[RMDB]
RNA sequence: GGGAACGACUCGAGUAGAGUCGAAAAGCAAGAUAUAACCGUACCGUCUGUCCAGCGACGACUGUAUGCUGACCGAUCUCAACAUCGGUGACUGCGAAGCGCGGUCCAGCCAACCCUGGUGGUGAGAGCCCAUUUACCAGUUCGCUGGUAAAUGGGCAAAAGAAACAACAACAACAAC
Reactivity to DMS in 0.01 (KOAc 150mM, MgCl2 10mM, bicine 150mM(pH8.5), 24C), signal-to-noise 2, nucleotides 027 to 126: g010c160a060a020g000a130u020a060u050a120a090c210c020g020u010a030c020c100g020u000c030u010g000u010c020c080a060g000c190g000a060c040g000a040c070u000g020u010a050u010g030c130u000g000a110c050c020g000a080u020c050u020c230a060a050c150a040u000c010g000g010u020g000a040c030u020g000c040g010a150a080g020c080g000c050g000g000u000c060c080a110g010c040c050a060a060c020c030c030u000g000g030u010g000g000u010g020a120g000a200
Reactivity to 2A3 in 0.01 (KOAc 150mM, MgCl2 10mM, bicine 150mM(pH8.5), 24C), signal-to-noise 1, nucleotides 027 to 126: g020c020a030a090g100a050u110a040u050a300a060c070c010g030u040a000c000c040g000u000c080u100g010u120c030c000a050g030c040g070a000c030g020a010c050u030g040u050a020u100g010c020u020g000a040c000c050g000a040u040c030u090c120a090a100c050a040u010c030g070g040u030g030a000c010u000g000c000g110a100a040g150c040g030c010g130g010u020c040c040a000g020c000c020a000a060c030c010c030u040g040g010u030g000g040u020g040a080g010a030
Structure probing data (DMS and 2A3) for a 177-nucleotide construct.
DMS adducts were read by reverse transcription with MarathonRT.
The 2A3 profile rests on 1,085 reads.
For DMS, 872 sequencing reads were counted.